[RMDB]
RNA sequence: GGGAACGACUCGAGUAGAGUCGAAAACAAGAGUUGAGGCAACUGCUAGCGUUCAGGUAACCCCUUUACGUGAUGCAUUUGUCCACUCUUGCACAGAAUGGAAUCAUGUUAAACUUACAGUGCAAGACGGCCGAAGACAUUUCGAUGUCUUCGGCCGAAAAGAAACAACAACAACAAC
Reactivity to 2A3 in 0.01 (KOAc 150mM, MgCl2 10mM, bicine 150mM(pH8.5), 24C), signal-to-noise 1, nucleotides 027 to 126: c070a010a010g030a030g000u150u070g000a240g030g000c000a000a000c000u000g000c000u000a000g000c000g000u000u000c000a050g000g070u080a000a000c000c070c000c110u000u000u000a000c000g030u000g000a000u210g060c000a000u000u000u000g000u000c000c000a010c000u060c050u000u050g000c080a000c020a000g220a300a000u300g050g060a030a190u030c160a010u190g070u090u270a130a100a000c070u010u180a070c000a050g010u090g000c010a030a030g030a000
About this RNA
Source: RMDB library RFM100, as collected in RNAgym. The record gives the reactivity of an RNA of 177 nucleotides to 2A3. The reactions ran in a buffer of 150 mM KOAc, 10 mM MgCl2 and 150 mM bicine (pH 8.5), at 24 C.